Chemical mapping of a 207-nucleotide RNA with 2A3 and DMS.

RNA sequence: GGGAACGACUCGAGUAGAGUCGAAAACGCCUCCUUCGGGAGGCGAAAAAAGCGUACUACUGACAGAGCGUUACAACCGUAUCCUUCCCAAAUAGGAAGGCCGAGCGGGUAACGCGACGAAGUCAGUAUCGCAAAAAGCCUUACUUCGGUAAGGCAACUAUAUGAGCGUGUUCGCACGCUCAUAUAGAAAAGAAACAACAACAACAAC
Reactivity to 2A3 in 0.01 (KOAc 150mM, MgCl2 10mM, bicine 150mM(pH8.5), 24C), signal-to-noise 2, nucleotides 027 to 156: c020g010c000c010u020c010c010u010u070c130g100g020g000a010g000g000c010g000a000a000a000a010a000a000g030c030g030u100a110c070u010a010c000u010g010a000c000a020g030a010g040c000g000u000u000a010c070a170a210c030c000g000u050a040u050c000c000u020u000c030c010c030a220a300a140u250a130g000g000a010a010g010g000c050c040g110a100g020c000g010g010g000u000a000a000c000g000c000g040a010c030g020a070a000g000u000c000a010g000u000a000u010c000g000c000a000a000a000a120a000g010c010c000u000u000a000c010u020u080c180g080g000u000a000a000g000g020c000a000a000
Reactivity to DMS in 0.01 (KOAc 150mM, MgCl2 10mM, bicine 150mM(pH8.5), 24C), signal-to-noise 2, nucleotides 027 to 156: c030g030c000c010u000c010c000u000u000c300g040g040g040a030g080g030c000g010a000a020a030a030a040a050g000c000g010u000a150c090u010a050c000u020g010a070c000a080g020a300g030c000g010u010u010a000c020a050a190c020c060g000u010a170u000c020c020u000u000c000c000c020a020a150a170u010a040g050g000a040a000g020g020c220c090g000a270g040c050g010g020g050u000a010a000c000g020c030g000a060c090g010a160a110g000u030c000a030g000u000a000u000c020g000c020a070a050a110a100a120g030c000c010u000u000a020c000u000u000c210g020g000u010a000a020g030g020c000a000a000

Source: RMDB library RNAMAK, as collected in RNAgym. The reactions ran in a buffer of 150 mM KOAc, 10 mM MgCl2 and 150 mM bicine (pH 8.5), at 24 C.